[RMDB]
Conditions: 150 mM KOAc, 10 mM MgCl2 and 150 mM bicine (pH 8.5), 24 C. Structure probing data (2A3) for a 207-nucleotide construct. Reactivities are given for positions 27 through 156. It was measured as part of the RMDB library M2RFPK.
RNA sequence: GGGAACGACUCGAGUAGAGUCGAAAAGAAAGAAAGAAAUUAGCUCGCCAGUUAGCGAGGUCUGUCCCCACACGACAGAUAAUCGGGUGCAACUCCCGCCCCUUUUCCGAGGGUCAUCGGAAACAAAAAAACUCAGGCAACUUCGGUUGCCUGAGAAGGAUUCACACCAGUUCGCUGGUGUGAAUCCAAAAGAAACAACAACAACAAC
Reactivity to 2A3 in 0.01 (KOAc 150mM, MgCl2 10mM, bicine 150mM(pH8.5), 24C), signal-to-noise 1, nucleotides 027 to 156: g020a010a090a000g070a020a120a000g090a040a170a040u190u180a090g070c000u010c000g010c020c020a130g120u150u210a020g000c010g000a000g000g010u010c050u010g020u010c020c020c000c020a040c010a010c080g030a000c010a010g030a030u050a080a030u140c000g000g000g010u010g000c020a000a000c040u000c020c000c000g000c000c000c000c000u020u140u060u010c000c000g000a000g000g000g010u110c040a000u000c010g000g000a000a000a000c000a000a020a000a000a010a030a030c010u000c000a000g000g000c010a010a000c000u040u090c240g120g020u000u000g030c000c000u000g000a000g000a000a000